[RMDB]
An RNA of 207 nucleotides, treated with 2A3 and DMS and read out base by base. For 2A3 the reverse transcriptase was SuperScript II with manganese. The data come from the RNA Mapping Database (RMDB), library OK3TST. For DMS the reverse transcriptase was MarathonRT. High 2A3 reactivity points to a flexible backbone, as in loops and unpaired stretches.
RNA sequence: GGGAACGACUCGAGUAGAGUCGAAAAAGUUUCACAGCUUUGAAACAAUUUGCUUAGGGUUGGGAUCGUGCCUUCAAAUUAGCCUCAGAUGCACAUCCAUAUCACCUUGCUUUCCAAUUUUAAGUCUGCUGUGCAUGUGCACCCAGAGGUUGCCGGAGGUUUAGGUACUUUUCGAAGUACCUAAACCAAAAGAAACAACAACAACAAC
Reactivity to 2A3 in 0.01 (KOAc 150mM, MgCl2 10mM, bicine 150mM(pH8.5), 24C), signal-to-noise 3, nucleotides 027 to 156: a010g040u030u020u030c060a090c030a050g070c060u100u180u170g020a040a020a020c020a050a110u060u040u090g020c030u090u110a050g020g000g020u030u100g030g020g060a070u050c070g020u010g000c020c030u050u050c010a100a170a260u130u110a090g050c030c020u070c070a020g020a080u020g010c000a000c000a020u000c030c020a060u080a030u150c040a100c020c000u030u050g000c030u030u090u030c020c000a010a070u110u110u040u160a070a050g050u030c020u030g030c030u030g030u030g040c030a060u080g050u090g050c000a060c000c000c020a050g000a020g050g000u020u070g030c030c020g060g000a070
Reactivity to DMS in 0.01 (KOAc 150mM, MgCl2 10mM, bicine 150mM(pH8.5), 24C), signal-to-noise 1, nucleotides 027 to 156: a210g000u010u020u000c040a050c060a190g010c050u000u010u000g010a040a030a070c030a050a210u000u000u000g010c020u010u000a090g000g000g020u000u000g030g010g030a040u000c060g040u000g020c010c030u000u000c070a070a110a180u000u000a120g040c000c050u000c000a120g010a100u000g010c000a040c030a050u010c050c000a080u000a040u010c010a080c000c020u000u000g010c070u010u020u010c090c050a080a150u010u000u040u000a040a050g010u000c050u000g040c050u000g020u000g030c080a110u000g030u000g000c010a040c000c090c040a060g010a040g030g000u000u000g000c010c020g030g010a300